[RMDB]
RNA sequence: GGGAACGACUCGAGUAGAGUCGAAAAGUAAAGAUUGUAUGAUAUAAAUACAUACAAUCAAGAAAUUAGGCGACCGUGGUGGUGGGCACCUGUAGACCGAGAAAAAGUACUGAAAUAGUACAAAAAAACUAUGUAUGAGAUUCGUCUCAUACAUAGUAAAAGAAACAACAACAACAAC
Reactivity to DMS in 0.01 (KOAc 150mM, MgCl2 10mM, bicine 150mM(pH8.5), 24C), signal-to-noise 1, nucleotides 027 to 126: g000u010a060a210a080g000a010u000u000g010u030a000u000g000a040u000a300u000a040a100a150u030a240c000a000u000a010c000a000a020u000c000a010a060g000a090a160a160u010u000a110g000g030c090g000a060c100c100g020u000g010g020u000g000g040u000g010g000g050c020a020c040c030u010g000u000a060g020a110c050c090g010a140g000a060a060a140a100a100g000u010a030c000u010g000a060a040a140u000a030g000u000a000c000a000a000a100a040a040a040